[RMDB]
RNA sequence: GGGAACGACUCGAGUAGAGUCGAAAAACAUUGGCAUCGUUGGUGGCAAGACGUCUAAUAACACUCAAUGUAUCAACAGAAGACUAUAGCAGUGAAGUUGCUAGGUUAAAACAGACGUUGACUGCUAGACUUGAAAGUUGUUCGCAACUUUCAAGUCAAAAGAAACAACAACAACAAC
Reactivity to DMS in 0.01 (KOAc 150mM, MgCl2 10mM, bicine 150mM(pH8.5), 24C), signal-to-noise 3, nucleotides 027 to 126: a060c040a120u010u000g000g020c060a060u010c040g000u000u000g040g030u000g000g000c060a040a070g010a050c050g050u000c030u020a080a090u000a030a050c110a110c110u010c110a120a050u000g020u010a060u000c090a030a100c130a080g020a120a130g000a040c120u020a110u000a010g000c040a020g030u010g000a090a110g020u000u000g020c010u020a030g000g010u000u000a050a050a060a130c190a070g000a070c070g000u000u010g020a080c050u000g000c000u000a090
Reactivity to 2A3 in 0.01 (KOAc 150mM, MgCl2 10mM, bicine 150mM(pH8.5), 24C), signal-to-noise 2, nucleotides 027 to 126: a000c050a070u100u150g110g010c020a030u000c060g100u030u060g080g050u020g010g000c010a010a050g050a030c000g010u000c020u010a030a080u040a130a070c030a010c020u090c060a060a080u080g060u050a120u050c050a040a090c020a050g160a250a030g030a050c030u010a050u000a300g000c010a000g080u050g100a170a010g040u090u010g000c020u030a020g080g030u040u120a010a050a040a070c070a020g030a020c010g000u000u020g060a030c030u010g000c000u020a040
Structure probing data (DMS and 2A3) for a 177-nucleotide construct. For DMS, 1,541 sequencing reads were counted. It was measured as part of the RMDB library OK2TST. Values cover nucleotides 27 to 126.